[RMDB]
RNA sequence: GGGAACGACUCGAGUAGAGUCGAAAAACGUGCCACUGAAGAGGCGUCUAAGCAGUCUUAUGCUAUUGCCACCAUCAAAGAAAUUGUUGGUGAGCGCCAACUAUUACUUGUGUGGGAGGCUGGCAAGUGAUCGGGUUGUUCGCAACCCGAAAAAGAAACAACAACAACAAC
Reactivity to 2A3 in 0.01 (KOAc 150mM, MgCl2 10mM, bicine 150mM(pH8.5), 24C), signal-to-noise 5, nucleotides 027 to 129: a000c040g050u100g060c000c010a030c020u040g040a050a010g030a060g080g010c020g030u000c040u040a030a000g020c000a000g010u030c040u080u150a050u070g020c000u020a080u070u250g010c000c000a020c000c000a020u080c040a020a080a050g040a030a090a040u020u010g020u000u000g000g000u100g170a120g040c160g040c020c000a000a000c000u010a000u050u030a030c010u040u020g030u040g000u010g140g030g010a150g020g010c000u000g020g000c020a040a060g020u050g090a050
Reactivity to DMS in 0.01 (KOAc 150mM, MgCl2 10mM, bicine 150mM(pH8.5), 24C), signal-to-noise 4, nucleotides 027 to 129: a150c170g000u000g030c050c040a090c020u040g030a070a070g030a090g020g040c070g000u040c060u010a080a020g030c050a040g010u010c120u010u070a080u050g000c000u000a020u000u050g040c040c010a090c050c010a010u040c040a050a070a100g000a070a060a040u050u000g010u000u000g020g030u000g060a130g000c170g000c040c010a030a010c020u000a030u060u000a040c010u050u000g000u020g050u030g030g000g020a100g060g000c030u030g000g040c000a080a040g000u070g060a020
Structure probing data (2A3 and DMS) for a 170-nucleotide construct. Reactivities are given for positions 27 through 129. Source: RMDB library 15KLIB, as collected in RNAgym. For 2A3 the reverse transcriptase was SuperScript II with manganese. Values are in units of 0.01, from 0 to 300, in steps of 10.